[RMDB]
RNA sequence: GGGAACGACUCGAGUAGAGUCGAAAACUUCACUGCCUGAGCUAAAUGAGUCCUAGCGGGAUUGCUAAUUGACAUUGACGAAAUAAGUGGUGUAGUUAGCAUUAACUUAACUCCAUCCUUGUAAAUUAAUAUAACUCCGUCAGCUUCGGCACCGUUACCUGGGUCGUACGUUCGCGUACGACCCAGGAAAAGAAACAACAACAACAAC
Reactivity to 2A3 in 0.01 (KOAc 150mM, MgCl2 10mM, bicine 150mM(pH8.5), 24C), signal-to-noise 2, nucleotides 027 to 156: c040u090u130c050a030c030u050g000c000c000u010g020a000g000c020u090a080a080a080u090g060a000g010u000c050c000u030a060g050c040g000g040g070a090u110u080g030c020u010a040a020u060u100g010a000c020a030u090u090g070a040c030g110a090a100a030u150a120a000g040u060g140g000u000g000u000a010g000u000u010a000g000c030a070u000u160a050a050c000u070u080a000a010c020u110c060c030a050u050c000c000u000u040g020u070a040a050a070u140u150a120a030u060a070u000a170a040c020u000c070c000g040u000c060a000g000c000u000u000c020g000g000c020a000c010c030g040u000u020a030
Reactivity to DMS in 0.01 (KOAc 150mM, MgCl2 10mM, bicine 150mM(pH8.5), 24C), signal-to-noise 1, nucleotides 027 to 156: c010u000u000c060a160c060u000g000c010c020u000g000a040g020c010u000a100a070a040u000g020a280g020u000c060c010u030a090g030c020g020g010g010a060u030u000g000c130u000a010a050u000u000g000a070c030a030u000u010g020a100c040g040a090a070a170u000a030a060g030u000g020g050u010g010u000a200g070u000u000a280g010c040a060u030u020a090a040c020u000u020a020a030c020u000c030c030a040u010c010c030u020u000g080u000a080a030a040u010u000a060a070u000a180u010a050a020c000u000c020c030g020u000c060a080g040c000u000u010c230g010g000c010a100c080c070g010u000u000a010

This 207-nucleotide RNA was probed chemically with 2A3 and DMS. Values cover nucleotides 27 to 156. Conditions: 150 mM KOAc, 10 mM MgCl2 and 150 mM bicine (pH 8.5), 24 C.